An RNA of 177 nucleotides, treated with 2A3 and DMS and read out base by base. Values cover nucleotides 27 to 126. For 2A3 the reverse transcriptase was SuperScript II with manganese. The reactions ran in a buffer of 150 mM KOAc, 10 mM MgCl2 and 150 mM bicine (pH 8.5), at 24 C.

RNA sequence: GGGAACGACUCGAGUAGAGUCGAAAAAGGAACUACGAGAUCACCCCAAGGACGCCUUCGGCAUCCAGGGGUCACGGACCGACCAUAGAACCCUGUUCAAUAAGUGGAACGCAUUAGCUGUCCGCUCCAACCGGACCGAUUUCGAUCGGUCCGGUUGAAAAGAAACAACAACAACAAC
Reactivity to 2A3 in 0.01 (KOAc 150mM, MgCl2 10mM, bicine 150mM(pH8.5), 24C), signal-to-noise 2, nucleotides 027 to 126: a000g130g030a050a080c060u090a010c160g110a030g030a090u060c050a090c020c030c070c000a060a120g000g000a000c020g020c000c000u080u060c150g090g010c000a000u020c000c000a020g020g000g000g000u010c040a040c070g020g020a030c070c060g030a040c000c000a040u020a060g110a040a060c000c000c010u020g100u050u020c060a090a060u210a280a060g020u050g030g020a080a100c060g000c090a150u160u180a080g010c050u020g050u040c000c000g050c080u040c000
Reactivity to DMS in 0.01 (KOAc 150mM, MgCl2 10mM, bicine 150mM(pH8.5), 24C), signal-to-noise 1, nucleotides 027 to 126: a180g000g000a090a090c030u000a070c050g000a100g000a150u000c190a090c020c000c000c000a190a200g010g010a030c120g030c000c020u020u100c190g100g000c050a000u000c000c020a150g000g000g000g000u000c070a070c060g000g000a190c120c000g010a020c000c090a030u010a000g000a010a090c080c010c000u060g020u060u000c090a000a090u050a060a060g000u000g000g000a010a000c140g010c060a160u060u000a060g050c030u000g000u000c000c000g000c030u030c140